[RMDB]
RNA sequence: GGGAACGACUCGAGUAGAGUCGAAAAGAUAUGGAUAUAGGACGUAUAUGGCAUCGAUCACACAGAACCGUACAUCGGAAACGAUGUACUCAGUAUGUGUGGGAGCCAUGCAAACUAUAUCCUAAGUCAAAGGACGGUUGGUUCGCCAACCGUCCAAGGAGUUAGAGUUGUUCGCAACUCUAACUCCAAAAGAAACAACAACAACAAC
Reactivity to 2A3 in 0.01 (KOAc 150mM, MgCl2 10mM, bicine 150mM(pH8.5), 24C), signal-to-noise 1, nucleotides 027 to 156: g020a010u090a000u110g020g000a000u010a010u020a010g040g030a020c100g080u070a210u040a050u260g000g000c010a190u230c170g060a060u080c010a000c000a000c010a010g000a000a010c020c000g010u010a000c010a000u000c000g000g050a020a100a020c000g000a000u000g000u000a000c020u000c020a000g000u000a000u020g000u010g000u000g000g000g010a000g000c010c000a030u010g020c010a140a130a020c000u010a000u000a000u000c010c000u020a060a010g000u000c020a010a130a100g000g000a000c000g010g000u010u000g020g000u030u080c160g000c060c000a010a000c010c000g000u000c010c000a000a030
The record gives the reactivity of an RNA of 207 nucleotides to 2A3. For 2A3, 1,595 sequencing reads were counted. Conditions: 150 mM KOAc, 10 mM MgCl2 and 150 mM bicine (pH 8.5), 24 C. 2A3 is a SHAPE reagent: it acylates the 2'-hydroxyl of flexible nucleotides of all four kinds.